[RMDB]
RNA sequence: GGGAACGACUCGAGUAGAGUCGAAAAGAUAUGGAAAUACAGGCUUUUGACGCUGAAUCGGAAACGAUACCAGCGAUAAGCCUUAAUUUCCUAAGUCAAAACCUUACGCAGUUCGCUGCGUAAGGAAGUUUAGUUUGAUGUUCGCAUCAAACUAAACAAAAGAAACAACAACAACAAC
Reactivity to DMS in 0.01 (KOAc 150mM, MgCl2 10mM, bicine 150mM(pH8.5), 24C), signal-to-noise 5, nucleotides 027 to 126: g010a020u010a240u010g000g000a000a000a040u000a110c300a040g000g000c000u010u000u000u010g020a150c030g000c000u000g000a080a020u000c010g010g000a050a060a100c010g010a010u000a090c160c010a000g010c000g020a090u000a030a040g010c000c000u000u000a060a050u000u000u000c000c000u010a040a090g000u000c010a100a080a090a110c010c000u000u000a000c000g010c000a010g010u000u010c230g030c000u000g010c000g000u000a000a000g010g000a010a040
Reactivity to 2A3 in 0.01 (KOAc 150mM, MgCl2 10mM, bicine 150mM(pH8.5), 24C), signal-to-noise 5, nucleotides 027 to 126: g010a010u050a010u090g010g030a000a010a000u060a050c090a040g000g020c020u140u220u300u300g250a060c020g000c000u000g000a010a010u000c010g010g000a020a020a020c010g000a000u050a190c180c000a000g000c010g050a060u090a170a010g000c000c010u000u000a020a030u010u000u000c000c000u000a030a010g020u010c000a010a030a060a270c000c000u000u000a000c000g000c010a010g000u040u120c170g170c190u010g000c000g000u000a000a000g020g000a010a000